[RMDB]
RNA sequence: GGGAACGACUCGAGUAGAGUCGAAAAGCGCGAAAAUCACGUGAAAUAAUCAGAGGAAUCGUUUGAAAUCAUCGUAGUAAUCGCGCGAAAAUCACGUGAAAUAAUCAGAGGAAUCGUUUGAAAUCAUAUCUGAUUGUAUCUUCGGAUACAAUCAGAUAAAAGAAACAACAACAACAAC
Reactivity to DMS in 0.01 (KOAc 150mM, MgCl2 10mM, bicine 150mM(pH8.5), 24C), signal-to-noise 3, nucleotides 027 to 126: g020c030g020c000g000a010a050a130a130u010c050a000c000g000u000g010a070a130a050u040a070a070u020c030a060g010a020g000g050a130a120u040c030g010u010u020u000g000a050a110a090u000c000a020u020c040g040u010a050g010u020a060a180u000c000g010c010g020c020g000a060a020a120a090u010c060a080c060g010u030g000a080a090a080u010a040a090u000c040a080g020a040g000g000a080a050u000c070g000u020u000u000g000a050a050a060u000c130a110u010
Reactivity to 2A3 in 0.01 (KOAc 150mM, MgCl2 10mM, bicine 150mM(pH8.5), 24C), signal-to-noise 4, nucleotides 027 to 126: g010c000g000c010g030a040a040a000a090u040c000a010c000g010u020g040a100a020a010u240a030a050u200c050a000g040a050g100g160a050a180u120c050g070u020u040u080g080a090a100a020u060c050a020u080c030g020u000a070g000u030a130a060u010c000g000c000g000c000g010a030a000a000a000u090c020a030c040g040u080g060a010a070a000u180a040a050u140c090a010g060a050g130g000a110a070u150c060g050u020u070u120g040a040a020a020u110c030a020u020
About this RNA:
The record gives the reactivity of an RNA of 177 nucleotides to DMS and 2A3. For DMS the reverse transcriptase was MarathonRT. Reactivities are rounded to 0.1 and cut off at 0 and 3. It was measured as part of the RMDB libraries RFM100 and RFMREP.